[RMDB]
RNA sequence: GGGAACGACUCGAGUAGAGUCGAAAAUCAAAGUCUUUGGGUUCUGGGGGAAGUAUGGUACGCAAGUCUGAAACUUAAAGGAAUUGACGGAACAGCACACCAGAAGUGGAACCUGCGGCUUAAUUUGACUCAACACGGGGAAACUCACGAGCGCAAGGAAUCACAUCUCCUUCGGGAGAUGUGAUUCAAAAGAAACAACAACAACAAC
Reactivity to 2A3 in 0.01 (KOAc 150mM, MgCl2 10mM, bicine 150mM(pH8.5), 24C), signal-to-noise 3, nucleotides 027 to 156: u100c040a050a020a000g050u030c030u180u220u120g000g000g020u030u000c030u050g050g010g000g000g000a020a020g070u080a170u150g000g000u020a010c040g020c040a040a030g010u030c010u040g030a060a060a090c080u110u190a140a100a040g030g020a000a060u030u010g030a090c020g020g010a090a010c010a000g050c020a050c000a020c070c000a070g100a210a030g130u110g070g000a010a000c020c000u010g020c040g010g000c000u000u000a000a030u020u040u040g000a000c000u000c030a020a030c030a010c060g010g010g000g000a020a050a040c020u030c030a050c150g060a070g020c150g010c110a080a010g160
Record summary:
An RNA of 207 nucleotides, treated with 2A3 and read out base by base. 2A3 is a SHAPE reagent: it acylates the 2'-hydroxyl of flexible nucleotides of all four kinds. Source: RMDB library PDB130, as collected in RNAgym. Reactivities are given for positions 27 through 156.